[RMDB]
RNA sequence: GGGAACGACUCGAGUAGAGUCGAAAAAGUACAACGCGCUGUUCGGCGCCUCUGAGCACUGCGUGACCACCCACCCGUCGGACAUGUGCGUGGCGCUGGCGGCGCUGGACGCCGUGGUGGUCGUGGACUGUGAACCGGUAUUCGUACCGGUUCACAGAAAAGAAACAACAACAACAAC
Reactivity to 2A3 in 0.01 (KOAc 150mM, MgCl2 10mM, bicine 150mM(pH8.5), 24C), signal-to-noise 1, nucleotides 027 to 126: a010g120u090a070c040a110a000c090g010c010g000c010u030g020u200u180c000g040g000c050g030c020c000u060c080u070g160a050g030c020a010c050u070g010c060g110u140g060a020c020c010a000c050c030c020a110c030c070c030g100u110c030g080g110a090c040a060u240g010u000g040c000g020u000g000g060c000g000c030u020g060g000c030g000g000c000g000c000u020g030g030a000c030g000c030c070g060u100g030g070u030g010g000u030c040g080u030g050g020a080
Reactivity to DMS in 0.01 (KOAc 150mM, MgCl2 10mM, bicine 150mM(pH8.5), 24C), signal-to-noise 2, nucleotides 027 to 126: a100g040u000a070c060a050a150c110g020c040g000c040u000g010u000u000c010g020g010c070g000c030c000u020c150u020g020a140g000c000a020c020u010g000c090g010u000g000a100c020c100a080c050c020c070a140c070c060c080g010u020c080g020g010a100c090a050u000g010u010g010c040g010u000g010g020c000g000c040u010g020g020c030g010g020c000g030c000u000g000g010a050c050g000c080c010g020u000g010g020u000g000g010u000c050g030u000g020g020a170

Chemical mapping of a 177-nucleotide RNA with 2A3 and DMS. For 2A3, 1,216 sequencing reads were counted. The RNA was probed in 150 mM KOAc, 10 mM MgCl2 and 150 mM bicine (pH 8.5) at 24 C. The data come from the RNA Mapping Database (RMDB), library OK2TST.